[RMDB]
An RNA of 177 nucleotides, treated with 2A3 and DMS and read out base by base.
Conditions: 150 mM KOAc, 10 mM MgCl2 and 150 mM bicine (pH 8.5), 24 C.

RNA sequence: GGGAACGACUCGAGUAGAGUCGAAAAGAUAUGGAAGGCAACAGCUAUCUUAGCGAAGAACUCGGAAACGAGGGAGCUAGAAUAGACAUGCCUUCCUAAGUCAAACGGAGACCUUCGGGUCUCCGAAGCCAAAGCAUAACUUCGGUUAUGCUUUGGCAAAAGAAACAACAACAACAAC
Reactivity to 2A3 in 0.01 (KOAc 150mM, MgCl2 10mM, bicine 150mM(pH8.5), 24C), signal-to-noise 1, nucleotides 027 to 126: g040a020u090a000u180g000g020a020a000g010g000c000a030a000c060a280g020c020u030a010u000c020u040u060a010g010c040g120a300a000g040a050a100c000u000c000g000g000a010a140a050c020g010a020g030g000g000a000g000c000u020a010g000a050a050u020a010g050a120c060a100u040g000c000c020u010u000c000c000u010a020a020g010u050c050a040a060a190c020g000g000a020g030a000c000c000u070u110c300g100g000g020u000c020u000c000c000g000a000a000
Reactivity to DMS in 0.01 (KOAc 150mM, MgCl2 10mM, bicine 150mM(pH8.5), 24C), signal-to-noise 1, nucleotides 027 to 126: g000a060u010a300u010g040g010a030a000g000g000c000a020a090c120a220g000c010u000a000u000c000u000u000a010g000c000g010a070a100g020a120a120c000u010c000g000g010a110a060a270c000g000a050g010g000g000a050g010c020u000a010g010a010a010u000a000g000a030c100a160u010g010c000c000u010u020c000c000u000a000a080g010u000c030a030a130a230c030g010g000a000g040a040c000c000u000u010c220g010g030g000u000c000u000c000c000g000a000a030
High DMS reactivity at an A or C suggests that its Watson-Crick edge is free.